RNA sequence: GGGAACGACUCGAGUAGAGUCGAAAAGAAAAUACUUGAAUGCCGAGGAAAUUAUGGGGAUGCUGAUUAAUUCAGCUCCAGCAUGCUGAGACAUGUGGGAUCGCAUAACGGAGAGGUAUUCUUUUAAGACAGCAACGGGUUUCGACCCGUUGCUGUCAAAAGAAACAACAACAACAAC
Reactivity to 2A3 in 0.01 (KOAc 150mM, MgCl2 10mM, bicine 150mM(pH8.5), 24C), signal-to-noise 1, nucleotides 027 to 126: g080a000a060a000a040u220a000c060u060u020g000a180a000u040g050c000c000g000a000g060g170a050a140a040u030u000a170u120g100g010g000g000a000u150g040c030u000g000a000u130u300a190a070u090u000c000a000g060c010u010c020c000a000g000c000a030u030g000c020u140g200a090g000a190c000a080u000g000u000g000g170g000a000u020c060g000c020a000u000a000a020c030g040g000a030g000a000g150g000u050a000u000u020c000u050u000u000u000a050a000